[RMDB]
RNA sequence: GGGAACGACUCGAGUAGAGUCGAAAAAGCGCUAGAUAUGUACAUGGGUAUUCCCCCAUAUCUGUGUACUAUAGCUGAGAGGACUUGCUUGAUAGGGGGAGGAGUGCAAGUUUGUUUGGUGCGCGAAGUGUAUAUUUUAAUUCGUUAAAAUAUACACAAAAGAAACAACAACAACAAC
Reactivity to 2A3 in 0.01 (KOAc 150mM, MgCl2 10mM, bicine 150mM(pH8.5), 24C), signal-to-noise 8, nucleotides 027 to 126: a000g060c030g010c030u030a010g010a090u090a020u210g000u000a000c000a010u020g020g000g000u010a020u080u150c000c000c000c000c000a000u000a000u000c000u000g010u000g000u000a000c010u040a020u080a030g030c070u060g040a050g020a040g100g030a050c010u040u060g030c010u080u120g100a070u220a160g010g010g060g010g010a020g020g050a080g020u060g000c010a030a010g000u010u020u040g070u060u080u070g060g000u060g010c020g000c020g030a100a060
Reactivity to DMS in 0.01 (KOAc 150mM, MgCl2 10mM, bicine 150mM(pH8.5), 24C), signal-to-noise 5, nucleotides 027 to 126: a090g010c020g000c020u010a020g010a090u010a050u030g010u000a000c010a010u000g000g000g010u010a000u010u020c020c010c000c000c080a300u000a000u000c000u010g020u020g000u000a000c010u010a060u010a060g010c040u010g010a120g000a100g000g000a020c010u000u000g000c010u010u010g010a190u030a120g010g000g000g010g010a040g010g000a120g010u000g000c020a020a010g000u000u000u010g010u010u010u000g000g010u020g000c030g010c030g000a090a090